[RMDB]
RNA sequence: GGGAACGACUCGAGUAGAGUCGAAAAGAUGAUUAGUUCGCUAAUCAUCAAAGAACGCUGCAACGGGCAGAGAGCGCGCGAGAGCGAGAAUGCGCGAAGAAAAAAGUUACGGGUUCGCCCGUAACAAUCAUAAAUAGGGGUUCGCCCCUAUUUAUGAAAAAGAAACAACAACAACAAC
Reactivity to 2A3 in 0.01 (KOAc 150mM, MgCl2 10mM, bicine 150mM(pH8.5), 24C), signal-to-noise 3, nucleotides 027 to 126: g000a000u000g000a010u010u010a010g010u030u050c110g000c110u000a000a010u000c000a000u000c000a000a000a020g020a080a020c070g010c050u040g000c020a110a200c130g040g180g000c010a010g040a010g000a020g100c010g020c000g000c020g050a070g010a020g170c050g020a050g070a150a060u100g010c050g010c020g020a060a080g060a080a150a020a020a000a010g000u010u000a000c000g000g010g060u010u070c230g050c020c000c020g010u000a000a000c000a000a010
Reactivity to DMS in 0.01 (KOAc 150mM, MgCl2 10mM, bicine 150mM(pH8.5), 24C), signal-to-noise 5, nucleotides 027 to 126: g000a000u000g000a010u000u000a000g010u000u020c230g030c000u010a000a010u000c000a000u000c000a070a130a090g010a140a150c090g000c030u000g000c040a110a100c130g020g010g010c030a050g000a110g000a120g010c030g010c020g000c020g030a110g000a130g020c070g010a070g000a110a120u010g000c030g020c030g010a100a090g010a010a070a080a070a100a110g000u000u000a000c000g010g000g010u000u010c270g010c000c000c000g010u000a000a000c000a060a090
Chemical mapping of a 177-nucleotide RNA with 2A3 and DMS. Reactivities are given for positions 27 through 126. The DMS profile rests on 5,013 reads. The data come from the RNA Mapping Database (RMDB), library M2PK50.